[RMDB]
RNA sequence: GGGAACGACUCGAGUAGAGUCGAAAAGAUAUGGAACCGUGAGUUUCAUCGAUCACGUCCAUCGGAAACGAUGGCGUGGGAGAAAUCCACGGUUCCUAAGUCAAACGAAGCUCUUCGGAGCUUCGAACUAGUCCCUGUAGUUCGCUACAGGGACUAGAAAAGAAACAACAACAACAAC
Reactivity to 2A3 in 0.01 (KOAc 150mM, MgCl2 10mM, bicine 150mM(pH8.5), 24C), signal-to-noise 2, nucleotides 027 to 126: g020a010u040a000u200g000g010a000a010c010c010g020u020g010a120g010u010u090u100c190a300u300c130g090a070u100c020a000c050g150u210c080c020a000u000c040g000g010a110a050a060c000g000a010u010g000g040c010g000u010g000g040g000a100g000a010a040a000u020c010c010a000c020g000g010u020u000c000c010u000a010a000g000u000c010a030a030a070c010g020a000a010g010c010u000c000u050u150c300g050g000a020g000c000u000u010c010g020a000a000
Reactivity to DMS in 0.01 (KOAc 150mM, MgCl2 10mM, bicine 150mM(pH8.5), 24C), signal-to-noise 2, nucleotides 027 to 126: g000a040u000a300u000g000g010a000a000c000c010g010u000g010a030g010u000u000u000c020a300u000c150g030a200u010c010a000c000g000u020c000c000a030u000c000g000g000a110a070a200c000g030a000u010g000g010c000g000u010g000g030g000a100g020a000a020a000u000c050c000a000c000g000g010u000u000c000c000u010a000a050g000u000c030a110a130a300c010g000a030a010g020c000u000c000u000u020c170g010g000a000g000c000u000u000c000g000a050a120